[RMDB]
RNA sequence: GGGAACGACUCGAGUAGAGUCGAAAAAGCGGACGUACGCGUCCGCAAGGAAGGGAUUCUGGGAGGUUGUAGCAGUGGAAAAAGUUCUUUUCUUCCUCUGAUCGCCCUCUCAGCUCUUUCCUUCUAAUUGUAGGUCCCAAUUCGUUGGGACCUACAAAAAAGAAACAACAACAACAAC
Reactivity to 2A3 in 0.01 (KOAc 150mM, MgCl2 10mM, bicine 150mM(pH8.5), 24C), signal-to-noise 2, nucleotides 027 to 126: a010g020c000g010g000a010c000g010u040a010c230g030c000g160u000c000c010g000c000a000a010g050g000a000a000g000g020g000a020u160u070c000u000g010g000g010a000g000g010u000u060g070u100a070g040c000a000g000u020g000g060a010a000a000a000a080g100u300u240c080u100u080u050u000c030u030u000c000c000u000c000u020g030a070u300c010g020c020c000c000u030c000u000c000a010g030c000u000c000u000u010u020c000c000u000u010c010u030a050a070
Reactivity to DMS in 0.01 (KOAc 150mM, MgCl2 10mM, bicine 150mM(pH8.5), 24C), signal-to-noise 1, nucleotides 027 to 126: a120g000c020g000g020a010c010g050u000a070c240g040c090g050u000c000c000g080c010a000a030g000g020a000a000g000g000g000a060u070u000c010u000g000g000g000a020g030g000u010u000g000u050a020g000c020a060g000u020g000g020a050a000a060a010a060g030u000u070c290u030u020u000u030c150u000u000c020c000u000c000u000g000a070u050c010g000c220c000c000u010c000u000c000a000g000c150u020c000u000u040u000c000c000u000u000c040u020a070a200

Structure probing data (2A3 and DMS) for a 177-nucleotide construct.
Source: RMDB library RFM100, as collected in RNAgym.
The 2A3 profile rests on 1,193 reads.
The RNA was probed in 150 mM KOAc, 10 mM MgCl2 and 150 mM bicine (pH 8.5) at 24 C.